[RMDB]
RNA sequence: GGGAACGACUCGAGUAGAGUCGAAAAAAGGAAUUAGCGUGCCUUCAUGCUAAGGGUUUGAUAUCUGCUAAAACCCGGUGCAUUCAUCAAUGCAGGUUAAGCCAAAUGGAUGUCCCGACCGGAGGCCAAAAGUUCGCUACGUUCGCGUAGCGAACAACUAGAUGGUACUGUUCGCAGUACCAUCUAGAAAAGAAACAACAACAACAAC
Reactivity to 2A3 in 0.01 (KOAc 150mM, MgCl2 10mM, bicine 150mM(pH8.5), 24C), signal-to-noise 5, nucleotides 027 to 156: a010a020g120g010a060a080u070u030a080g010c050g040u050g020c030c050u070u130c050a040u080g020c020u080a020a050g000g010g010u010u010u000g050a050u060a070u140c070u090g030c030u070a050a030a010a010c010c000c020g020g010u050g010c000a020u020u080c020a050u050c040a060a210u120g020c020a000g100g040u120u130a080a050g010c000c020a070a180a110u030g010g010a010u030g030u040c000c000c000g010a010c000c010g000g020a010g000g020c010c010a000a160a010a020g000u010u000c000g000c000u000a000c000g030u030u060c240g000c010g100u010a000g000c010g000a000a000c000a000a000
Reactivity to DMS in 0.01 (KOAc 150mM, MgCl2 10mM, bicine 150mM(pH8.5), 24C), signal-to-noise 3, nucleotides 027 to 156: a040a060g000g010a100a060u000u000a050g000c060g020u010g000c040c030u010u000c030a080u020g010c050u000a260a110g010g000g010u000u000u000g000a180u000a050u010c060u000g010c080u000a130a020a020a040c000c010c000g020g080u000g010c020a050u000u000c040a060u000c090a050a190u010g000c040a060g010g020u000u000a080a110g010c030c000a070a090a150u000g000g000a090u000g000u000c040c000c010g010a170c040c050g000g000a110g010g030c020c040a040a090a070a130g010u000u000c000g020c010u000a020c000g010u000u010c300g030c020g040u000a020g010c000g000a000a000c000a040a120
This 207-nucleotide RNA was probed chemically with 2A3 and DMS. Values are in units of 0.01, from 0 to 300, in steps of 10. For DMS, 7,417 sequencing reads were counted. Values cover nucleotides 27 to 156. The reactions ran in a buffer of 150 mM KOAc, 10 mM MgCl2 and 150 mM bicine (pH 8.5), at 24 C.